Structure probing data (2A3 and DMS) for a 177-nucleotide construct. 2A3 adducts were read by reverse transcription with SuperScript II with manganese. The reactions ran in a buffer of 150 mM KOAc, 10 mM MgCl2 and 150 mM bicine (pH 8.5), at 24 C.
[RMDB]
RNA sequence: GGGAACGACUCGAGUAGAGUCGAAAAGGUGAGCUGGACGGGAAGUAGCUCCAGCGACUGCUUCCGAAGCUUUGAUAAGAGCAACUCCAUCUACGUUGCUCAAGUAGGUGGUAGCAGCAAACACCGACGAUGCGUACCAUUUCGAUGGUACGCAUCGAAAAGAAACAACAACAACAAC
Reactivity to 2A3 in 0.01 (KOAc 150mM, MgCl2 10mM, bicine 150mM(pH8.5), 24C), signal-to-noise 4, nucleotides 027 to 126: g000g000u020g010a070g000c010u000g010g040a010c050g110g060g080a100a070g080u120a000g040c040u000c050c000a010g010c000g040a030c000u000g000c000u010u000c000c010g050a100a020g000c000u040u080u130g160a200u170a190a130g020a020g000c000a000a030c010u030c070c020a150u070c080u110a060c090g050u050u060g030c040u030c000a010a000g000u020a010g010g110u170g030g030u040a010g000c010a000g000c000a080a070a000c000a010c000c010g000a000
Reactivity to DMS in 0.01 (KOAc 150mM, MgCl2 10mM, bicine 150mM(pH8.5), 24C), signal-to-noise 4, nucleotides 027 to 126: g010g030u000g010a140g000c000u020g000g000a060c120g040g010g020a090a140g020u030a100g000c110u010c020c000a000g010c010g010a300c010u010g000c000u000u000c020c000g000a300a280g000c010u000u010u060g000a120u060a160a170g010a010g000c000a020a020c000u030c250c130a180u050c180u030a070c120g000u000u060g000c040u000c020a000a020g010u000a000g000g010u030g040g000u010a030g000c000a020g030c130a140a050a300c000a000c000c000g000a140
For DMS, 4,107 sequencing reads were counted.